[RMDB]
RNA sequence: GGGAACGACUCGAGUAGAGUCGAAAAUCUGCGUUUGUCGAUCCAGUCUUGUUCUGAUUUACCACAGUCAAUGUAAUAUUAGCAGAUUUGAGAUUGAGAUUCCGAUCAUUGCUGAUAUUCCGUAUGUUGAAUGUAAUUGAUUGACUCUGAUUGAACGGUUUCUACUAGGUUUCGACCUAGUAGAAACAAAAGAAACAACAACAACAAC
Reactivity to DMS in 0.01 (KOAc 150mM, MgCl2 10mM, bicine 150mM(pH8.5), 24C), signal-to-noise 2, nucleotides 027 to 156: u010c010u000g020c050g020u010u010u000g010u000c030g000a100u000c020c020a130g000u000c030u000u000g040u010u000c030u040g010a130u010u010u000a080c090c060a090c030a060g020u000c070a050a070u000g040u010a040a050u000a030u010u000a070g070c000a190g000a030u000u000u000g000a050g010a090u000u000g020a210g000a290u010u000c010c010g020a030u000c060a090u010u010g000c060u010g000a030u000a060u000u000c080c100g030u010a080u000g040u000u010g000a060a070u000g010u010a090a090u000u000g000a130u000u000g000a040c010u010c060u010g010a060u010u010g010a020a090c120g010
Reactivity to 2A3 in 0.01 (KOAc 150mM, MgCl2 10mM, bicine 150mM(pH8.5), 24C), signal-to-noise 7, nucleotides 027 to 156: u010c020u050g040c020g060u020u070u130g030u030c020g010a030u010c020c020a020g040u010c030u060u100g040u090u040c020u040g070a130u030u060u130a090c040c040a060c040a140g070u150c050a060a070u110g040u070a050a010u030a070u100u080a020g010c010a000g040a060u060u140u260g110a140g020a020u050u160g040a140g010a260u200u040c050c010g000a000u040c040a110u100u130g000c000u010g000a010u000a030u020u020c040c020g040u080a120u140g050u060u040g070a150a120u100g010u140a070a130u080u060g090a060u020u070g010a030c030u010c050u090g070a130u090u090g070a090a030c030g050